RNA sequence: GGGAACGACUCGAGUAGAGUCGAAAAGAUCGUGCGCAACGACCCGCCGCUACGAUACGACACCAACCUCCCCGUGGAUCUGCUACACAUGGUGUACGCGGGCCGCGGGGCGACCGGCUCGUCGGGGCAGGAGCACCCCGUUCGCGGGGUGCUCCUGAAAAGAAACAACAACAACAAC
Reactivity to 2A3 in 0.01 (KOAc 150mM, MgCl2 10mM, bicine 150mM(pH8.5), 24C), signal-to-noise 1, nucleotides 027 to 126: g050a010u000c040g030u070g050c070g000c050a030a190c140g220a150c030c000c000g050c000c010g100c020u100a030c000g010a070u060a220c010g000a000c030a020c020c000a000a120c050c000u050c000c000c000c000g010u000g000g050a280u070c000u000g070c000u050a010c000a010c020a300u270g150g000u000g030u000a030c200g000c000g000g000g000c030c000g000c040g000g000g000g000c000g000a020c000c010g040g000c080u070c080g130u070c000g000g000g010g020
The record gives the reactivity of an RNA of 177 nucleotides to 2A3. The data come from the RNA Mapping Database (RMDB), library OK1LIB. The reactions ran in a buffer of 150 mM KOAc, 10 mM MgCl2 and 150 mM bicine (pH 8.5), at 24 C. Reactivities are given for positions 27 through 126.